[RMDB]
RNA sequence: GGGAACGACUCGAGUAGAGUCGAAAAUGAUCGGUACGCUGAUCGGCACCAUUAAUGCUUACGGUGACGCCCAUCAGGCUUGGAUCCUGCUGUGGCAGUGUAAUCGUCGGGGAAACUUCAAUAGUUGACUUUAUGAACCCUUCGGGGUUCAUAAAGUAAAAGAAACAACAACAACAAC
Reactivity to 2A3 in 0.01 (KOAc 150mM, MgCl2 10mM, bicine 150mM(pH8.5), 24C), signal-to-noise 1, nucleotides 027 to 126: u070g010a000u010c000g000g070u010a070c270g000c090u020g000a080u000c060g040g060c100a080c000c020a000u100u250a150a080u220g190c070u070u160a010c020g030g000u050g000a010c020g010c000c040c000a010u030c010a000g130g000c070u300u300g040g000a040u100c000c010u000g040c030u020g010u170g060g070c030a130g000u000g020u110a050a010u000c000g030u000c010g010g010g010g000a030a030a030c050u090u050c220a200a090u230a060g100u090u190g040
Reactivity to DMS in 0.01 (KOAc 150mM, MgCl2 10mM, bicine 150mM(pH8.5), 24C), signal-to-noise 2, nucleotides 027 to 126: u000g020a000u010c030g030g030u000a070c170g020c030u010g000a040u000c040g000g010c120a170c060c000a160u000u010a050a110u010g030c110u000u000a010c050g010g000u000g000a050c060g010c050c010c000a030u000c030a010g030g010c140u010u020g000g010a130u000c000c010u000g000c080u000g010u030g000g000c000a040g030u000g000u000a100a030u000c000g010u010c030g000g000g010g020a160a050a030c090u000u010c130a080a070u000a090g000u010u040g020

This 177-nucleotide RNA was probed chemically with 2A3 and DMS. DMS (dimethyl sulfate) methylates the pairing face of unpaired adenines and cytosines. The 2A3 profile rests on 505 reads. The reactions ran in a buffer of 150 mM KOAc, 10 mM MgCl2 and 150 mM bicine (pH 8.5), at 24 C. Values cover nucleotides 27 to 126. 2A3 adducts were read by reverse transcription with SuperScript II with manganese. For DMS, 1,306 sequencing reads were counted.